[RMDB]
RNA sequence: GGGAACGACUCGAGUAGAGUCGAAAAGUAGACAUCUGACAAACGAUGCCUUUUGUAAAUAUAUCAAUAAGCAUUAUGAUUUGUUCAUCUUGGAUGAAUCACAUACGUAUAAUCUGAUGAACAAUACAGCAGUUACAAGAUUUUUAGCGUAUUAUCCUGUACCUCAUACAUUCGUGUAUGAGGUACAAAAAGAAACAACAACAACAAC
Reactivity to DMS in 0.01 (KOAc 150mM, MgCl2 10mM, bicine 150mM(pH8.5), 24C), signal-to-noise 4, nucleotides 027 to 156: g020u010a060g020a100c020a030u010c010u020g000a300c130a120a130a160c130g010a020u000g050c000c030u000u020u000u000g000u000a050a110a130u000a140u020a240u020c040a070a060u000a090a090g010c010a030u000u000a060u000g010a120u010u000u000g020u000u000c020a050u010c130u010u000g030g010a050u000g020a100a090u000c050a060c060a060u010a030c050g040u000a070u000a110a060u000c040u000g010a070u000g000a080a100c040a060a140u010a110c070a080g040c060a080g000u000u000a090c040a050a080g010a130u000u010u000u000u000a110g040c050g010u000a080u000u010a050u000c040c040
Reactivity to 2A3 in 0.01 (KOAc 150mM, MgCl2 10mM, bicine 150mM(pH8.5), 24C), signal-to-noise 7, nucleotides 027 to 156: g110u110a040g010a050c010a030u010c040u070g020a040c030a040a100a020c040g000a010u010g010c020c020u050u070u040u050g040u030a040a220a070u190a070u070a020u150c040a040a040u080a090a010g010c030a010u020u070a060u190g120a180u010u030u020g020u040u060c040a080u040c120u100u140g020g000a010u010g040a070a110u100c030a040c020a090u120a050c030g040u080a040u010a160a020u000c010u020g040a080u060g010a100a000c000a020a040u160a120c050a040g130c040a020g030u040u040a040c010a040a030g000a070u020u050u050u140u200a040g010c010g000u020a050u030u010a050u060c000c010